[RMDB]
RNA sequence: GGGAACGACUCGAGUAGAGUCGAAAACGACAGACGUUCGCGUCUGUCGAAAUACCGAGGUUGUUGCUCGGUAAAUAACAACAACCCUUGGAAACAAGCGAAAAAGGAGAUGGUUCGCCAUCUCCAAUCGACUUAAAUCGUUCGCGAUUUAAGUCGAAAAAGAAACAACAACAACAAC
Reactivity to DMS in 0.01 (KOAc 150mM, MgCl2 10mM, bicine 150mM(pH8.5), 24C), signal-to-noise 2, nucleotides 027 to 126: c020g070a000c010a000g000a020c000g030u000u030c270g010c010g040u000c000u000g030u000c010g020a010a100a100u020a060c000c000g000a030g030g010u010u000g000u000u010g000c020u000c140g040g010u000a020a070a020u020a040a040c020a030a030c050a030a120c050c050c020u010u000g030g000a300a130a150c010a040a030g010c100g000a020a060a070a160a070g000g010a050g000a040u000g000g010u000u000c300g010c000c000a020u000c000u010c000c000a010a020